An RNA of 170 nucleotides, treated with 2A3 and DMS and read out base by base. DMS adducts were read by reverse transcription with MarathonRT. It was measured as part of the RMDB library 15KLIB. The RNA was probed in 150 mM KOAc, 10 mM MgCl2 and 150 mM bicine (pH 8.5) at 24 C.

RNA sequence: GGGAACGACUCGAGUAGAGUCGAAAAGAAUCCCUCAAGAGAGAGGAGAAUCCCCAUGACGCUGGAAGAGACUUCCGGGUAACCAAGUCAAGGAGAAGGAACGGUAGAAAAGAGCGAGCCUCUCGAUUAGCAGGUGGGUUCGCCCACCUGAAAAGAAACAACAACAACAAC
Reactivity to 2A3 in 0.01 (KOAc 150mM, MgCl2 10mM, bicine 150mM(pH8.5), 24C), signal-to-noise 6, nucleotides 027 to 129: g040a020a020u040c000c040c000u010c010a080a060g100a000g020a000g010a000g030g000a000g020a040a080u040c030c000c000c000a130u110g030a010c050g000c070u050g030g000a020a040g110a050g060a150c060u050u020c030c040g000g010g000u060a080a040c030c040a080a010g040u060c010a030a040g080g000a080g020a080a000g040g020a070a030c070g070g020u100a050g130a030a120a020a010g050a010g030c020g000a000g030c020c010u010c000u010c010g060a080u030u090a040g030
Reactivity to DMS in 0.01 (KOAc 150mM, MgCl2 10mM, bicine 150mM(pH8.5), 24C), signal-to-noise 7, nucleotides 027 to 129: g030a190a070u020c020c020c020u030c070a100a070g000a110g000a080g010a040g030g000a060g010a100a090u000c000c020c020c130a120u040g020a060c140g030c070u040g020g040a040a060g020a110g030a090c060u030u020c070c010g000g000g000u050a020a060c040c050a070a070g010u040c040a060a100g000g000a040g030a030a020g000g000a080a060c100g000g000u030a010g000a080a040a060a120g030a070g040c110g000a000g000c090c010u040c040u030c020g000a140u000u060a070g000